[RMDB]
RNA sequence: GGGAACGACUCGAGUAGAGUCGAAAAUUUGACAGACUGCAAGUUCUGGACAGCCAUUACCAGGACGUGCUCAAGGAGGUCAAAGCAGCGGCGUCAAAAGUGAAGGCUAACUUGCUAUCCGUAGAGGUGUGCAUAACGCGUUCGCGCGUUAUGCACAAAAAGAAACAACAACAACAAC
Reactivity to 2A3 in 0.01 (KOAc 150mM, MgCl2 10mM, bicine 150mM(pH8.5), 24C), signal-to-noise 2, nucleotides 027 to 126: u040u020u010g030a000c020a050g020a090c000u060g010c020a050a060g000u060u050c050u050g040g000a030c020a050g100c070c010a070u090u100a080c010c000a000g050g020a000c030g010u000g000c040u080c150a060a100g030g010a010g000g180u140c070a070a030a000g050c030a000g000c010g020g000c000g090u050c060a030a020a030a030g090u140g100a070a000g000g000c000u040a000a080c020u090u040g020c010u020a050u080c000c000g000u010a030g060a090g080g140
Reactivity to DMS in 0.01 (KOAc 150mM, MgCl2 10mM, bicine 150mM(pH8.5), 24C), signal-to-noise 1, nucleotides 027 to 126: u000u000u000g000a080c030a050g010a110c060u010g020c000a000a020g000u010u000c000u000g000g010a280c090a000g000c050c030a030u170u000a040c030c000a040g000g010a030c010g040u000g030c000u020c170a170a080g000g000a160g040g000u030c090a030a090a060g040c040a050g000c090g000g000c120g090u000c000a030a090a000a100g010u030g030a060a160g000g000c000u060a210a110c240u000u000g000c020u000a070u010c030c030g000u000a040g080a060g110g000
Chemical mapping of a 177-nucleotide RNA with 2A3 and DMS. For 2A3, 774 sequencing reads were counted. High DMS reactivity at an A or C suggests that its Watson-Crick edge is free. Conditions: 150 mM KOAc, 10 mM MgCl2 and 150 mM bicine (pH 8.5), 24 C.